[RMDB]
RNA sequence: GGGAACGACUCGAGUAGAGUCGAAAACCUGGUUUAGGGUUCCAGGCUAGCCCUAUCUAUCGGUCGAGAUGCGAGCGCUUAAGCUCAAAUUGAGUGGCUGAGUUAGUGGCGAACGUAUCCCUAUGUUAAAACGGUAGCUGCUUCGGCAGCUACCGAAGCACGUACUAUACUUCGGUAUAGUACGUGCAAAAGAAACAACAACAACAAC
Reactivity to 2A3 in 0.01 (KOAc 150mM, MgCl2 10mM, bicine 150mM(pH8.5), 24C), signal-to-noise 2, nucleotides 027 to 156: c000c000u010g040g000u050u080u080a030g020g010g000u080u000c000c010a000g040g000c060u030a030g010c000c000c010u030a010u000c010u030a190u040c000g060g020u000c020g020a010g000a100u020g000c000g000a010g030c050g050c180u300u280a140a050g000c000u000c000a010a010a000u010u030g020a020g010u200g030g000c000u000g010a000g030u000u040a100g000u190g100g000c020g020a070a040c040g110u140a050u140c000c000c000u030a040u080g110u030u080a070a130a020a010c000g000g000u020a000g000c000u000g000c000u070u050c220g030g000c000a000g000c010u010a000c000c020g000a000a000

This 207-nucleotide RNA was probed chemically with 2A3. As a SHAPE reagent, 2A3 marks flexible, mostly unpaired nucleotides at the ribose 2'-OH. The RNA was probed in 150 mM KOAc, 10 mM MgCl2 and 150 mM bicine (pH 8.5) at 24 C. For 2A3, 1,050 sequencing reads were counted.